Chemical mapping of a 177-nucleotide RNA with 2A3. Conditions: 150 mM KOAc, 10 mM MgCl2 and 150 mM bicine (pH 8.5), 24 C. The data come from the RNA Mapping Database (RMDB), library OK1LIB.
[RMDB]
RNA sequence: GGGAACGACUCGAGUAGAGUCGAAAAACUGCGCUUUAAAAUCCAAUACAUCAAUGUUGUUAUCGUCUGCUAAUAAGUGGUAAUUUUUAUUGUUUAGCGCAUUGACAACAUCGUUUUUACGGUUAUAGAGUGUAGGAACGUUCGCGUUCCUACACUCAAAAGAAACAACAACAACAAC
Reactivity to 2A3 in 0.01 (KOAc 150mM, MgCl2 10mM, bicine 150mM(pH8.5), 24C), signal-to-noise 2, nucleotides 027 to 126: a000c080u080g000c010g000c050u010u050u110a060a240a000a150u000c070c080a030a000u040a120c040a160u110c020a000a020u040g000u030u040g000u020u000a020u050c100g250u020c220u060g020c000u080a100a080u270a290a130g010u110g040g140u050a050a140u000u070u000u000u300a080u010u030g120u010u070u000a000g000c000g050c180a010u050u170g010a040c040a040a000c000a000u080c060g000u000u000u090u000u230a060c040g040g000u100u000a080u060a140
Background: 2A3 adducts were read by reverse transcription with SuperScript II with manganese.